Structure probing data (DMS and 2A3) for a 177-nucleotide construct. For DMS, 1,905 sequencing reads were counted.

RNA sequence: GGGAACGACUCGAGUAGAGUCGAAAAGAUAUGGACGGUGGCCACAGACUGUUUCUAAGACAGUCGGAAACGAUCGAGAAACAGGUCUUAAGCACCGUCCUAAGUCAAAGCGCUGUUCGCAGCGCAAGUCCUUUGAAUUGUUCGCAAUUCAAAGGACAAAAGAAACAACAACAACAAC
Reactivity to DMS in 0.01 (KOAc 150mM, MgCl2 10mM, bicine 150mM(pH8.5), 24C), signal-to-noise 3, nucleotides 027 to 126: g010a050u000a300u010g010g010a030c000g020g010u000g000g010c000c040a160c300a040g000a080c000u000g000u000u010u000c000u020a210a110g000a140c300a060g000u000c020g010g000a100a070a130c020g000a000u000c030g010a060g000a020a020a010c010a050g000g020u010c000u000u020a270a170g000c000a020c020c000g000u000c000c000u000a000a070g020u000c030a050a120a110g000c020g020c000u000g020u000u010c180g010c000a000g020c000g050c010a010a040
Reactivity to 2A3 in 0.01 (KOAc 150mM, MgCl2 10mM, bicine 150mM(pH8.5), 24C), signal-to-noise 3, nucleotides 027 to 126: g020a000u050a040u100g000g000a010c010g020g010u040g230g300c030c030a040c010a030g010a010c000u000g020u010u000u010c040u050a140a090g120a110c050a080g050u020c040g010g000a030a050a000c010g020a030u120c060g020a020g040a070a010a000c020a050g150g300u040c000u010u040a040a000g040c000a000c010c000g000u010c000c000u000a000a000g010u000c000a060a000a040g000c000g000c020u020g030u140u110c300g000c150a030g000c010g020c000a000a000